The record gives the reactivity of an RNA of 177 nucleotides to 2A3 and DMS. The RNA was probed in 150 mM KOAc, 10 mM MgCl2 and 150 mM bicine (pH 8.5) at 24 C. It was measured as part of the RMDB library OK1LIB. DMS adducts were read by reverse transcription with MarathonRT. Reactivities are given for positions 27 through 126.

RNA sequence: GGGAACGACUCGAGUAGAGUCGAAAAACCAAUGGAGGGUGAGCCUUGUGUAGUUUAGUCUGCUGUUACAUGGUUUAAGUUGGAGUGGGUUUAGUGAUAAUCUAUGUGGCGAUUCAAGAUUGGUACAGGACGAACAAUGCUUCGGCGUUGUUCGUCCAAAAGAAACAACAACAACAAC
Reactivity to 2A3 in 0.01 (KOAc 150mM, MgCl2 10mM, bicine 150mM(pH8.5), 24C), signal-to-noise 1, nucleotides 027 to 126: a000c000c000a020a000u020g030g010a030g000g000g060u020g030a030g000c030c010u060u030g040u000g010u070a030g010u000u040u210a000g030u010c030u030g030c010u030g090u130u090a010c010a040u060g010g140u090u190u130a120a170g010u030u110g080g030a100g020u050g030g000g000u010u020u070a010g000u030g010a100u080a300a000u040c010u000a070u000g000u030g030g000c040g000a000u040u000c000a020a020g010a080u000u080g040g000u000a010c030a030
Reactivity to DMS in 0.01 (KOAc 150mM, MgCl2 10mM, bicine 150mM(pH8.5), 24C), signal-to-noise 2, nucleotides 027 to 126: a090c000c020a060a050u020g000g000a120g000g000g000u000g000a130g000c050c030u000u050g020u020g020u000a030g020u040u010u010a030g000u000c040u010g000c010u010g000u060u000a030c100a000u000g050g000u010u000u000a030a110g000u010u020g000g000a050g030u040g000g000g020u020u030u000a050g000u010g000a110u030a010a060u040c050u030a050u010g020u000g010g000c030g000a040u020u000c090a110a110g000a150u000u000g010g000u000a210c180a160